[RMDB]
RNA sequence: GGGAACGACUCGAGUAGAGUCGAAAAUUUCUUAUUAUUCCGAUGAUGUUCCCCAACCAGGGAUUGUCCUCCUCGAGUUUCUUGAUGGUUCUCUUGGCCUUCCGGAGCCUUCUCUCGAGAUCGUCCGCACCCGAGUAGUUCGCUACUCGGAAAAGAAACAACAACAACAAC
Reactivity to DMS in 0.01 (KOAc 150mM, MgCl2 10mM, bicine 150mM(pH8.5), 24C), signal-to-noise 5, nucleotides 027 to 129: u030u020u040c010u010u030a100u050u050a120u020u040c060c030g030a100u060g030a110u040g030u030u020c000c000c000c000a100a120c080c040a100g000g000g000a090u030u050g020u040c000c010u010c000c000u030c000g020a120g040u010u020u030c050u020u000g030a040u050g020g010u020u010c010u030c070u010u000g040g000c050c040u020u030c030c050g000g000a140g000c070c020u000u000c000u020c010u000c020g010a000g000a120u020c030g000u000c000c000g000c140a160c090
Reactivity to 2A3 in 0.01 (KOAc 150mM, MgCl2 10mM, bicine 150mM(pH8.5), 24C), signal-to-noise 9, nucleotides 027 to 129: u030u030u020c010u040u110a130u140u050a090u140u070c040c040g060a090u120g030a030u130g060u040u020c000c010c000c010a030a040c040c030a050g000g000g040a030u020u120g040u040c000c000u000c000c010u020c030g030a060g040u020u080u010c030u050u090g050a080u090g040g020u100u020c030u000c000u050u080g040g000c000c000u060u020c030c000g030g000a020g000c000c000u050u050c020u000c000u010c000g040a050g050a230u010c010g010u000c000c010g070c030a050c010
The data come from the RNA Mapping Database (RMDB), library 15KLIB. Chemical mapping of a 170-nucleotide RNA with DMS and 2A3. 2A3 adducts were read by reverse transcription with SuperScript II with manganese. DMS adducts were read by reverse transcription with MarathonRT.